[RMDB]
RNA sequence: GGGAACGACUCGAGUAGAGUCGAAAAGACCAAUCGUUCGCGAUUGGUCAAAAGGUGGAUGCUACGCUACCGAAGUAGCAAAAGUGCAGCUACAAUGCACAAAAACUUGGUUGUUCGCAACCAAGAAGGUAUCUCUCAAGUUCGCUUGAGAGAUACCAAAAGAAACAACAACAACAAC
Reactivity to DMS in 0.01 (KOAc 150mM, MgCl2 10mM, bicine 150mM(pH8.5), 24C), signal-to-noise 2, nucleotides 027 to 126: g020a000c000c000a010a000u000c000g020u000u010c240g040c010g000a020u000u010g000g000u000c000a030a010a130a100g000g000u000g020g000a220u010g000c000u000a010c020g000c120u000a160c030c030g010a070a170g010u000a030g010c010a050a040a040a070g010u000g000c000a000g020c140u000a050c180a070a110u010g000c010a020c010a090a070a070a100a180c030u000u000g000g020u000u000g000u010u020c200g000c000a000a000c000c000a000a000g000a090a040
Reactivity to 2A3 in 0.01 (KOAc 150mM, MgCl2 10mM, bicine 150mM(pH8.5), 24C), signal-to-noise 3, nucleotides 027 to 126: g000a000c000c000a010a000u010c010g030u070u020c290g000c000g110a000u000u010g000g000u000c000a030a000a000a010g070g010u070g050g050a100u060g000c020u020a010c030g020c030u050a050c020c070g070a110a020g020u020a000g000c000a000a020a040a050g010u010g010c000a010g030c020u030a060c100a140a160u040g010c020a000c010a010a100a010a020a040c010u010u000g010g020u010u010g030u050u040c250g000c070a000a010c000c000a010a000g010a010a010
Annotation:
Chemical mapping of a 177-nucleotide RNA with DMS and 2A3.